[RMDB]
RNA sequence: GGGAACGACUCGAGUAGAGUCGAAAAGAUAUGGAUCUUGUAGGGAGCUGGAUGGUCGGAAACGACCAUACAGCAUCGAUCUACCGGAUCCUAAGUCAAAAGCUGUACCACUUCGGUGGUACAGCAAGAUAGUUCAUCUCUUCGGAGAUGAACUAUCAAAAGAAACAACAACAACAAC
Reactivity to DMS in 0.01 (KOAc 150mM, MgCl2 10mM, bicine 150mM(pH8.5), 24C), signal-to-noise 3, nucleotides 027 to 126: g000a020u000a030u010g000g010a010u000c000u000u010g010u000a020g010g000g000a010g040c000u010g000g010a020u000g000g010u000c000g020g000a010a010a050c000g010a020c000c010a010u000a010c000a000g020c000a280u010c230g000a020u000c000u000a000c010c200g020g010a010u000c010c010u000a010a100g000u000c000a110a100a140a120g010c000u010g000u000a010c000c000a010c010u000u010c260g030g000u000g000g000u000a000c000a000g010c000a010a030
Reactivity to 2A3 in 0.01 (KOAc 150mM, MgCl2 10mM, bicine 150mM(pH8.5), 24C), signal-to-noise 2, nucleotides 027 to 126: g010a000u030a000u070g010g000a000u010c000u040u010g020u000a010g040g010g000a070g010c000u010g000g010a010u010g010g020u010c000g020g020a010a010a000c000g010a000c000c000a000u020a000c010a000g010c000a000u130c010g010a010u000c000u000a010c030c120g040g000a000u000c010c000u000a000a010g010u010c010a060a000a070a190g000c000u000g000u000a010c000c010a010c000u090u120c300g150g000u010g020g000u000a000c000a010g000c000a000a000

Chemical mapping of a 177-nucleotide RNA with DMS and 2A3. Values cover nucleotides 27 to 126. The reactions ran in a buffer of 150 mM KOAc, 10 mM MgCl2 and 150 mM bicine (pH 8.5), at 24 C. For 2A3 the reverse transcriptase was SuperScript II with manganese. It was measured as part of the RMDB library TTRDES. For DMS, 4,376 sequencing reads were counted.